[RMDB]
Source information
This 207-nucleotide RNA was probed chemically with 2A3. Conditions: 150 mM KOAc, 10 mM MgCl2 and 150 mM bicine (pH 8.5), 24 C. It was measured as part of the RMDB library RNAMAK. For 2A3 the reverse transcriptase was SuperScript II with manganese.
RNA sequence: GGGAACGACUCGAGUAGAGUCGAAAAGGGGUCGACCGUUUGACGCGAGCGACAUGCUCCGUCAUACUGAAGCCUCCACGGUAUGCGGAGCAACAGCGCUCGCCGAGGUCGACGGAGGCACCCAAAAGUAGGUAGAUCGUUCGCGAUCUACCUACAACUACACACCCAAGUUCGCUUGGGUGUGUAGAAAAGAAACAACAACAACAAC
Reactivity to 2A3 in 0.01 (KOAc 150mM, MgCl2 10mM, bicine 150mM(pH8.5), 24C), signal-to-noise 2, nucleotides 027 to 156: g120g000g040g020u020c000g000a000c000c020g040u060u140u130g000a030c000g000c000g010a000g000c000g110a120c140a160u300g010c000u020c000c020g230u240c040a000u010a000c000u000g000a120a030g010c000c000u010c010c000a000c010g000g000u000a000u000g000c000g000g000a000g070c010a070a050c080a060g000c020g020c000u020c000g000c000c000g000a000g010g010u000c000g000a020c000g000g000a000g000g040c020a030c000c000c020a010a130a010a070g010u000a000g010g000u000a000g000a010u000c030g020u060u080c190g050c010g140a020u010c000u010a000c000c000u010a010c000a000a010